[RMDB]
RNA sequence: GGGAACGACUCGAGUAGAGUCGAAAACGAAACAGUGGCACUACCCCUCUCCGUAUUCACGGGGGGCGUUAAGUGUCACAUCGAUAGAUCAAGGUGCCUACAAGCGAAGUGGGUCAUCGUGGGGUCGCCCGUACGAGGAGAAAGCCGGUUUCGGCUUGUUCUUUAGAGCGUUCGCGCUCUAAAGAACAAAAGAAACAACAACAACAAC
Reactivity to 2A3 in 0.01 (KOAc 150mM, MgCl2 10mM, bicine 150mM(pH8.5), 24C), signal-to-noise 3, nucleotides 027 to 156: c020g030a060a050a010c060a070g000u000g000g000c000a000c000u040a030c030c020c040c000u020c020u040c000c010g040u080a150u250u300c210a020c010g000g000g000g000g020g010c000g030u050u100a120a020g000u000g000u000c010a000c000a000u000c000g050a040u060a090g050a010u050c040a080a090g020g000u000g010c010c000u020a030c020a150a070g180c080g140a120a020g010u030g000g020g090u100c030a020u030c020g020u080g010g040g000g000u010c000g040c050c000c010g040u100a080c060g040a050g200g030a100g090a110a080a030g020c020c020g080g000u020u020u040c010g000g000c000u030u020
Annotation
The data come from the RNA Mapping Database (RMDB), library PDB130. The record gives the reactivity of an RNA of 207 nucleotides to 2A3. The reactions ran in a buffer of 150 mM KOAc, 10 mM MgCl2 and 150 mM bicine (pH 8.5), at 24 C. Values cover nucleotides 27 to 156.